[RMDB]
The data come from the RNA Mapping Database (RMDB), library OK2TRN.
This 177-nucleotide RNA was probed chemically with DMS and 2A3.
For 2A3 the reverse transcriptase was SuperScript II with manganese.
The reactions ran in a buffer of 150 mM KOAc, 10 mM MgCl2 and 150 mM bicine (pH 8.5), at 24 C.

RNA sequence: GGGAACGACUCGAGUAGAGUCGAAAAGCUUAUUUUCCAGGUUCAUGGUGAGAUACUGAGCUUCCGAGUGCCUGAAAAUCAUUUCCAGGUUUUACCGUAUUGCAGUUAACCCUGGGCUGUGCGGUGGGCACUCUCCAUGUUUCGACAUGGAGAGUGCAAAAGAAACAACAACAACAAC
Reactivity to DMS in 0.01 (KOAc 150mM, MgCl2 10mM, bicine 150mM(pH8.5), 24C), signal-to-noise 1, nucleotides 027 to 126: g020c120u000u000a060u000u000u000u000c040c020a040g000g000u000u020c060a130u010g000g000u000g000a070g010a090u000a090c240u010g000a070g020c100u000u000c030c020g000a070g000u020g030c030c000u000g000a080a030a020a110u000c100a120u000u000u020c040c010a090g000g000u000u000u000u000a100c000c000g050u020a080u000u000g010c030a020g000u000u020a120a100c110c020c030u000g020g000g010c090u000g020u000g010c050g000g010u000g000g000
Reactivity to 2A3 in 0.01 (KOAc 150mM, MgCl2 10mM, bicine 150mM(pH8.5), 24C), signal-to-noise 1, nucleotides 027 to 126: g040c030u230u080a100u050u120u050u040c070c000a070g070g000u050u060c130a110u120g050g060u020g050a060g000a010u140a150c080u060g070a010g080c000u020u060c020c010g010a060g070u050g000c000c000u020g000a000a000a000a000u220c050a020u090u090u000c010c000a040g000g070u070u010u110u070a020c020c000g020u100a150u090u230g050c020a000g010u020u090a080a110c000c020c010u010g000g070g000c010u000g010u000g050c010g000g040u080g050g040